[RMDB]
RNA sequence: GGGAACGACUCGAGUAGAGUCGAAAAGAUGUGUUCGAUUCCUUCAAACUCAACAAUCUUGUUUUCAGGAGAACAGAUGGUUUACCCAGCGGUAGCUCCUUUUGCACCGGUAAUGUAAACAAUGUUACAUGACGUACCAGUUCGCUGGUACGUCAUGAAAAGAAACAACAACAACAAC
Reactivity to DMS in 0.01 (KOAc 150mM, MgCl2 10mM, bicine 150mM(pH8.5), 24C), signal-to-noise 3, nucleotides 027 to 126: g020a040u030g030u030g010u010u000c070g000a040u030u020c010c000u010u040c180a060a050a090c140u010c090a020a110c160a070a050u010c030u010u010g020u010u010u010u000c070a110g030g000a170g010a050a010c020a020g000a130u060g010g030u030u020u020a030c030c130c130a160g020c030g000g000u000a110g000c000u030c120c090u000u000u050u030g020c050a040c000c020g030g000u000a010a120u010g010u000a010a040a020c080a060a090u000g030u000u000a190
Reactivity to 2A3 in 0.01 (KOAc 150mM, MgCl2 10mM, bicine 150mM(pH8.5), 24C), signal-to-noise 4, nucleotides 027 to 126: g070a050u080g070u050g040u140u030c050g040a180u040u100c020c000u020u040c120a110a060a050c050u080c090a020a020c030a090a280u070c010u120u100g060u050u040u090u110c040a010g020g080a040g030a080a000c030a020g100a070u080g100g020u020u050u070a070c030c030c000a040g070c030g070g020u060a070g030c050u180c000c000u090u170u150u140g000c010a000c030c000g030g030u130a100a030u080g020u040a020a060a040c080a100a100u100g000u060u040a030

Chemical mapping of a 177-nucleotide RNA with DMS and 2A3. DMS adducts were read by reverse transcription with MarathonRT. The RNA was probed in 150 mM KOAc, 10 mM MgCl2 and 150 mM bicine (pH 8.5) at 24 C. The DMS profile rests on 3,398 reads. It was measured as part of the RMDB library OK1LIB. For 2A3, 2,108 sequencing reads were counted.